[RMDB]
RNA sequence: GGGAACGACUCGAGUAGAGUCGAAAAUGAUCAAUGGGUCAACCAGGCUGCUGCGAAAAGAUUUGCCGGUGGCCAAAACGUGAAUGGCUUCCAGCAGGCUGGUCUUGCCGCUGCCGUUUUGGCCGUGCGCUAGUGGAGAUUUCGAUCUCCACUAGCGAAAAGAAACAACAACAACAAC
Reactivity to 2A3 in 0.01 (KOAc 150mM, MgCl2 10mM, bicine 150mM(pH8.5), 24C), signal-to-noise 1, nucleotides 027 to 126: u110g000a020u060c070a100a300u230g230g000g000u010c000a010a000c010c020a040g090g000c000u010g010c020u010g050c060g120a100a110a080a010g140a170u140u150u240g040c080c040g150g000u120g050g030c000c000a000a020a000a000c060g070u150g130a140a070u070g020g000c000u020u010c030c010a030g040c000a020g060g040c000u000g000g070u010c000u020u020g040c000c010g030c060u040g090c000c020g020u000u000u040u120g040g000c000c020g000u050g000
Reactivity to DMS in 0.01 (KOAc 150mM, MgCl2 10mM, bicine 150mM(pH8.5), 24C), signal-to-noise 2, nucleotides 027 to 126: u000g000a020u000c070a180a120u010g060g000g000u010c030a100a110c050c020a040g010g030c020u000g030c000u000g000c210g000a110a100a100a140g000a110u000u000u000g010c030c020g000g050u010g020g010c030c010a020a010a020a020c070g030u010g020a040a130u000g020g000c100u000u000c040c010a020g000c030a040g010g000c010u000g010g000u000c050u000u010g000c060c020g000c100u000g000c070c020g000u020u000u000u000g000g010c000c020g000u000g000